[RMDB]
RNA sequence: GGGAACGACUCGAGUAGAGUCGAAAAGAUAUGGAAUACCUACCCACCAGGAUUCAGCAUCGAUCCGUUUCUCUUCGGAAACGAAGAGAAACGGGGAGCUGAACAACCUGAGGGUAUUCCUAAGUCAGAUAUAAAAUGUCUUCGGACAUUUUAUAUCAAAAGAAACAACAACAACAAC
Reactivity to 2A3 in 0.01 (KOAc 150mM, MgCl2 10mM, bicine 150mM(pH8.5), 24C), signal-to-noise 2, nucleotides 027 to 126: g060a070u300a220u300g000g010a030a000u010a010c030c010u120a300c030c020c010a060c000c020a020g030g030a090u010u000c000a000g020c030a170u300c100g080a040u010c010c000g010u000u000u010c000u000c000u020u010c010g030g000a120a080a070c030g030a020a010g000a030g000a000a010a010c000g000g000g000g000a000g000c000u010g030a020a010c010a060a110c000c010u010g020a040g030g020g010u000a000u000u000c000c000u000a050a000g250u200c160a090
Reactivity to DMS in 0.01 (KOAc 150mM, MgCl2 10mM, bicine 150mM(pH8.5), 24C), signal-to-noise 2, nucleotides 027 to 126: g000a140u010a280u020g000g030a020a010u010a010c000c000u000a200c040c000c020a300c150c010a000g010g010a270u000u000c000a010g000c020a300u000c220g010a040u020c010c010g000u020u000u000c000u000c000u000u010c010g000g000a130a080a120c010g000a000a000g020a020g000a000a000a000c000g000g000g000g010a020g010c010u000g000a010a010c090a100a050c000c000u010g020a110g010g000g010u000a020u000u010c000c000u000a080a060g000u000c140a200